[RMDB]
RNA sequence: GGGAACGACUCGAGUAGAGUCGAAAAACGCCAGGUACGCCUGGCGAAGGGUUACUCCUUUGCGCUUUCAGCGCUCAAUUUGAUAAAGAUUCGCACCUCUAUCAAACCGGGUAACCCCACCUUUGGCAAGGCCUACUGUCAGAUUAAAUCUGAACUACUACAAAUGAACAGAUACUUAGUCCAGCUCGACUUCAUCUCCUUUAUAAAAUUCAACUCGUUGUCGUUCUGUUGCGCCAAUACGCUGUUUACUCGCUGUACGCAGCGAGAUUGCAAAAUUCGUUUUGCAAAAAAGAAACAACAACAACAAC
Reactivity to 2A3 in 0.01 (KOAc 150mM, MgCl2 10mM, bicine 150mM(pH8.5), 24C), signal-to-noise 3, nucleotides 027 to 266: a000c010g000c010c000a000g000g010u060a040c210g040c030c000u000g000g020c010g010a030a000g000g000g000u000u000a010c060u250c060c010u120u140u090g000c040g020c030u170u300u300c270a070g030c000g000c010u000c030a060a140u010u010u000g000a000u020a000a110a000g030a070u110u090c040g020c040a040c030c000u020c000u020a000u020c000a020a000a020c040c090g000g000g000u010a010a000c010c040c000c010a120c030c000u070u060u120g070g000c030a080a030g030g020c020c010u040a050c020u070g050u030c020a000g010a040u090u190a090a150a150u040c010u020g020a110a040c010u060a030c010u070a060c110a130a120a170u170g050a100a050c010a020g060a010u040a120c030u100u070a020g020u020c030c020a030g050c040u000c000g020a020c010u060u020c080a090u020c040u130c030c040u080u210u060a230u220a130a180a050a070u210u120c050a050a050c020u000c000g150u150u090g010u010c020g030u020u000c000u020g090u070u090g040c040g010c020c030a070a050u130a150c030g020c040u050g050u030u080u060a050c010u010c000g000c000u010g010u030a030c200g030c110a010g000c000g000a020g000a020
Reactivity to DMS in 0.01 (KOAc 150mM, MgCl2 10mM, bicine 150mM(pH8.5), 24C), signal-to-noise 3, nucleotides 027 to 266: a170c020g020c030c010a000g010g020u000a130c180g030c010c000u010g000g030c030g020a060a060g020g010g000u010u000a010c010u000c000c200u010u020u020g000c020g040c000u000u020u030c210a120g000c000g020c000u010c170a070a220u010u010u000g000a040u000a020a030a030g000a080u000u020c300g000c180a160c260c000u000c040u000a020u000c000a020a010a060c300c260g030g000g000u000a030a020c010c010c010c270a120c080c020u000u010u010g010g030c000a090a050g000g010c080c050u010a080c110u010g000u010c040a040g010a010u030u040a050a110a300u020c000u030g010a090a110c070u010a040c120u000a110c200a140a100a100u010g010a080a100c010a020g010a050u000a100c150u010u020a050g000u000c040c030a070g030c070u000c010g000a060c060u010u000c050a040u010c060u010c070c060u000u040u010a110u010a080a070a100a080u010u030c150a070a040c030u000c010g010u020u000g010u000c000g000u000u000c010u000g000u000u000g020c040g000c150c070a040a110u010a050c170g000c040u000g000u000u000u000a100c000u000c030g000c010u010g010u000a110c130g020c000a010g010c000g010a010g000a040
Chemical mapping of a 307-nucleotide RNA with 2A3 and DMS. For 2A3 the reverse transcriptase was SuperScript II with manganese. The DMS profile rests on 8,569 reads. The reactions ran in a buffer of 150 mM KOAc, 10 mM MgCl2 and 150 mM bicine (pH 8.5), at 24 C.